[RMDB]
RNA sequence: GGGAACGACUCGAGUAGAGUCGAAAACGAGCGUGGUGAAGUUUGUGACCAACAUGAACCGGAACACUUGGCGAAUCUAUUCCACGGUAUUUGCUACUCUAUUUUCGUACAAGCAAACCGCUCUAAGAAGAUCCCUUUCUUUCGAGAAAGGGAUCUUAAAAGAAACAACAACAACAAC
Reactivity to 2A3 in 0.01 (KOAc 150mM, MgCl2 10mM, bicine 150mM(pH8.5), 24C), signal-to-noise 4, nucleotides 027 to 126: c060g010a010g050c010g000u040g060g010u070g080a120a050g020u020u060u090g040u080g090a160c000c010a040a080c030a080u090g030a010a030c010c040g040g080a070a020c020a000c020u010u030g010g000c010g000a010a010u050c030u080a120u100u070c040c020a070c060g000g020u040a100u030u090u170g050c050u030a030c010u020c020u090a050u030u050u050u060c030g010u050a130c010a030a010g000c020a060a050a000c020c000g020c030u000c000u020a080a200g060
Reactivity to DMS in 0.01 (KOAc 150mM, MgCl2 10mM, bicine 150mM(pH8.5), 24C), signal-to-noise 3, nucleotides 027 to 126: c260g000a040g000c010g020u000g000g070u000g020a130a060g000u010u000u010g000u000g020a200c100c110a110a150c070a060u000g020a010a050c070c040g000g010a130a050c120a130c050u000u000g010g000c020g000a050a030u000c020u000a170u020u010c080c090a030c130g000g000u010a030u020u000u030g000c050u000a030c010u030c080u000a030u010u000u010u020c010g000u010a090c100a050a010g000c170a060a070a110c100c020g020c130u000c020u010a070a090g000
Background:
Source: RMDB library OK1LIB, as collected in RNAgym. An RNA of 177 nucleotides, treated with 2A3 and DMS and read out base by base. The 2A3 profile rests on 3,172 reads. 2A3 adducts were read by reverse transcription with SuperScript II with manganese. DMS adducts were read by reverse transcription with MarathonRT.